[RMDB]
RNA sequence: GGGAACGACUCGAGUAGAGUCGAAAAGAUAUGGACGAGACGAUCUAGAAUCCGAAGAACUCGGAAACGAGGGAGGAUCUAGGGAUCGUCCUAAGUCAAAAGAAGCAUAGCUUCGGCUAUGCUUCAAGACUCUGUAUAUCUUCGGAUAUACAGAGUCAAAAGAAACAACAACAACAAC
Reactivity to 2A3 in 0.01 (KOAc 150mM, MgCl2 10mM, bicine 150mM(pH8.5), 24C), signal-to-noise 2, nucleotides 027 to 126: g040a000u110a050u140g000g010a000c010g020a000g050a100c060g010a010u020c000u000a000g030a160a250u010c020c020g090a220a040g000a050a040c000u000c010g030g030a100a050a020c010g000a000g000g000g000a020g020g000a000u010c000u010a020g000g040g020a020u000c000g000u000c000c010u020a090a020g030u030c020a030a050a040a140g000a000a010g000c010a000u010a000g010c000u030u060c200g020g000c000u020a000u010g000c000u000u000c000a000a010
Reactivity to DMS in 0.01 (KOAc 150mM, MgCl2 10mM, bicine 150mM(pH8.5), 24C), signal-to-noise 3, nucleotides 027 to 126: g000a060u000a300u000g010g010a030c010g010a020g010a100c200g010a060u020c010u000a010g010a090a090u010c000c020g010a090a110g000a150a170c010u000c010g010g000a100a060a130c010g000a010g000g000g000a080g000g000a030u000c010u000a010g000g010g000a030u000c000g020u000c010c010u010a040a140g010u020c030a080a080a100a100g010a000a000g000c010a010u000a000g000c010u000u000c180g010g010c000u000a000u000g000c000u010u000c000a040a100